[RMDB]
RNA sequence: GGGAACGACUCGAGUAGAGUCGAAAAGGCUGCACGAGUGAGAAUGCAGGCAUGAGUAGCGAAAGACGAGUGAGAAACUCGUCCGCCGAAUGACCAAGGGUUCCUGGGCCAGGUUAAUCCGCCCAGGCACUUAGCCCUCAUUCGUGAGGGCUAAGUGAAAAGAAACAACAACAACAAC
Reactivity to DMS in 0.01 (KOAc 150mM, MgCl2 10mM, bicine 150mM(pH8.5), 24C), signal-to-noise 7, nucleotides 027 to 126: g010g020c010u000g020c030a040c080g010a140g020u030g020a120g020a150a100u010g000c070a070g000g010c040a060u010g010a140g000u010a090g000c010g000a150a160a130g010a010c000g000a010g000u000g000a190g020a150a120a020c000u000c000g000u000c000c030g000c140c010g000a090a060u010g000a150c030c030a090a120g010g000g000u000u010c000c000u000g010g010g010c020c100a170g010g010u020u040a100a140u040c010c040g000c000c000c000a000g000g000
Reactivity to 2A3 in 0.01 (KOAc 150mM, MgCl2 10mM, bicine 150mM(pH8.5), 24C), signal-to-noise 5, nucleotides 027 to 126: g080g000c010u020g010c000a000c040g080a140g130u170g030a070g050a150a050u090g020c030a020g020g010c000a040u070g010a030g090u230a030g050c030g020a180a090a010g000a010c010g000a000g010u020g020a130g110a060a150a020c000u000c000g000u000c000c000g000c000c000g050a090a070u110g050a080c020c030a050a090g080g040g000u050u030c010c010u000g000g000g000c030c090a070g000g040u080u130a070a060u110c020c000g030c040c000c000a000g000g000

This 177-nucleotide RNA was probed chemically with DMS and 2A3.
The RNA was probed in 150 mM KOAc, 10 mM MgCl2 and 150 mM bicine (pH 8.5) at 24 C.
DMS adducts were read by reverse transcription with MarathonRT.
The data come from the RNA Mapping Database (RMDB), libraries RFM100 and RFMREP.